[RMDB]
RNA sequence: GGGAACGACUCGAGUAGAGUCGAAAAGAUCUGCGCCGAUCCGAAACGCUAGCAAACAGCCCGCAUCAUGUCGUCUCCUAACUUCGGCGUGGUGAAAUACUGAGCUUAUGCGAGUAAGCCUGUUAGCAAUAGAUCAGAACGUUCGCGUUCUGAUCAAGAGACCAUGAACGUUCGCGUUCAUGGUCUCAAAAGAAACAACAACAACAAC
Reactivity to 2A3 in 0.01 (KOAc 150mM, MgCl2 10mM, bicine 150mM(pH8.5), 24C), signal-to-noise 2, nucleotides 027 to 156: g020a050u030c010u030g010c000g000c030c030g020a050u080c010c060g080a030a020a030c050g000c040u040a000g000c060a130a120a110c070a140g070c040c000c000g040c070a090u090c030a050u130g090u030c050g010u000c040u020c080c040u070a140a120c020u050u060c000g030g000c000g010u000g000g010u020g020a060a000a000u160a080c070u060g000a010g020c000u030u050a010u010g070c010g020a020g060u070a080a040g010c030c040u040g000u080u020a000g000c050a060a100u050a170g000a000u000c000a000g010a000a010c020g020u070u010c180g020c000g070u010u000c050u000g000a000u000c000a000a010